Chemical mapping of a 207-nucleotide RNA with 2A3 and DMS. For 2A3 the reverse transcriptase was SuperScript II with manganese. The 2A3 profile rests on 1,948 reads.

RNA sequence: GGGAACGACUCGAGUAGAGUCGAAAAGUCUCCUAGAGACCUUGGCCGUCGGGCCUUACACCCCGACUUGCUGAGUUUCUCUAGGAGAGUCCCUUUCCCAGCCAGAGGUGGCUGGUCAAACAAUACCAAAACUCUUGCUAGUUCGCUAGCAAGAGAACAUCAUUUCGAGGUUCGCCUCGAAAUGAUGAAAAGAAACAACAACAACAAC
Reactivity to 2A3 in 0.01 (KOAc 150mM, MgCl2 10mM, bicine 150mM(pH8.5), 24C), signal-to-noise 2, nucleotides 027 to 156: g020u000c010u000c000c000u000a010g000a000g000a010c000c000u000u000g010g010c000c000g000u000c000g000g010g010c050c020u040u110a060c070a030c030c000c000c000g000a000c020u060u230g000c000u010g010a010g020u030u270u030c000u000c000u000a000g010g000a000g000a000g000u000c000c000c000u000u060u020c010c010c010a000g000c000c000a000g000a010g020g000u000g000g000c000u080g070g000u170c030a000a010a010c040a060a020u000a010c000c000a020a050a090a130c000u000c000u000u000g000c000u000a010g050u080u040c220g030c140u000a000g000c000a000a000g000a000g000a000a010
Reactivity to DMS in 0.01 (KOAc 150mM, MgCl2 10mM, bicine 150mM(pH8.5), 24C), signal-to-noise 1, nucleotides 027 to 156: g020u000c020u030c000c010u000a030g010a060g000a010c300c010u000u000g010g000c000c300g000u000c000g030g030g020c090c040u010u010a090c220a210c160c000c000c000g000a030c000u000u000g000c010u030g010a030g000u000u010u000c010u000c020u000a010g010g000a050g030a000g000u000c000c000c000u000u000u000c110c000c010a070g030c040c000a080g030a300g000g020u020g040g010c030u010g000g020u000c070a000a030a120c110a070a060u000a110c020c000a030a170a120a100c000u000c000u000u000g040c000u000a020g020u000u020c260g040c000u010a020g000c000a010a000g000a000g000a040a050
The data come from the RNA Mapping Database (RMDB), library M2RFPK.